[RMDB]
RNA sequence: GGGAACGACUCGAGUAGAGUCGAAAACUUGUCGCAAACAAAGUGCAAAGAAGCAAUCUCCUGGAUUCUUUCCCCCAUUGUAUCGGACGAACUGAUAAGCACUAUGGAGCCAGGACAAGAGACGCACGUAAGAUCGCAAAUUCGUUUGCGAUCUUACAAAAGAAACAACAACAACAAC
Reactivity to 2A3 in 0.01 (KOAc 150mM, MgCl2 10mM, bicine 150mM(pH8.5), 24C), signal-to-noise 5, nucleotides 027 to 126: c000u010u060g040u050c050g020c050a050a130a060c030a070a240a010g040u030g010c020a110a150a000g060a070a040g070c030a020a070u010c010u030c020c020u100g090g020a130u080u040c020u070u050u020c010c000c000c000c020a040u060u160g090u060a030u090c040g030g030a020c020g030a150a090c040u050g020a040u030a130a050g030c020a000c050u030a050u080g030g000a030g030c000c010a040g050g020a010c010a020a060g020a010g000a020c070g040c050a030c060
Reactivity to DMS in 0.01 (KOAc 150mM, MgCl2 10mM, bicine 150mM(pH8.5), 24C), signal-to-noise 2, nucleotides 027 to 126: c050u030u000g020u000c040g020c070a040a130a100c100a030a030a010g040u010g050c010a100a020a030g010a130a100g020c040a080a070u040c080u010c030c050u010g010g010a060u000u000c020u000u010u000c020c000c020c030c040a020u080u140g000u000a020u000c080g000g000a040c100g000a050a130c040u010g000a030u010a090a220g000c040a050c010u020a140u010g000g020a050g010c030c120a100g000g010a000c130a000a070g040a050g040a060c100g010c100a070c140